[RMDB]
RNA sequence: GGGAACGACUCGAGUAGAGUCGAAAACGCACGAUAUAGGGCAAAUGUGGAUCGAUCAAUUUGAUUGGGUUUAUCGUGAGAUGGAUUAUGCGGUAUUUAGCAUGACAAUCCACCCUGAUGUGAGCGGUGUGAAAGAAGGAUUCGUCCUUCUUUCACAAAAAGAAACAACAACAACAAC
Reactivity to 2A3 in 0.01 (KOAc 150mM, MgCl2 10mM, bicine 150mM(pH8.5), 24C), signal-to-noise 6, nucleotides 027 to 126: c020g010c030a010c020g030a020u040a020u140a220g040g000g020c070a050a070a120u220g030u070g050g030a050u060c020g010a010u010c050a110a170u100u110u280g130a140u040u110g070g030g030u030u030u020a060u060c030g010u030g020a100g030a060u060g020g010a010u020u030a000u060g010c010g090g030u110a170u090u230u040a070g000c000a000u010g040a060c050a020a010u000c000c000a010c020c010c020u040g020a070u110g040u050g040a040g040c030g080g030
Reactivity to DMS in 0.01 (KOAc 150mM, MgCl2 10mM, bicine 150mM(pH8.5), 24C), signal-to-noise 9, nucleotides 027 to 126: c080g010c020a030c030g010a070u000a080u000a080g000g000g020c150a060a080a070u010g030u000g010g000a080u000c040g010a040u000c030a090a140u000u010u010g010a060u010u000g020g010g010u000u000u010a020u000c030g000u000g000a160g010a080u000g000g010a040u000u000a030u000g010c020g010g020u010a100u010u010u010a130g010c010a020u010g010a080c200a060a030u000c010c010a140c020c010c010u000g000a080u000g010u000g000a070g020c060g010g010
An RNA of 177 nucleotides, treated with 2A3 and DMS and read out base by base. Reactivities are given for positions 27 through 126. It was measured as part of the RMDB library OK2TRN. The DMS profile rests on 16,906 reads.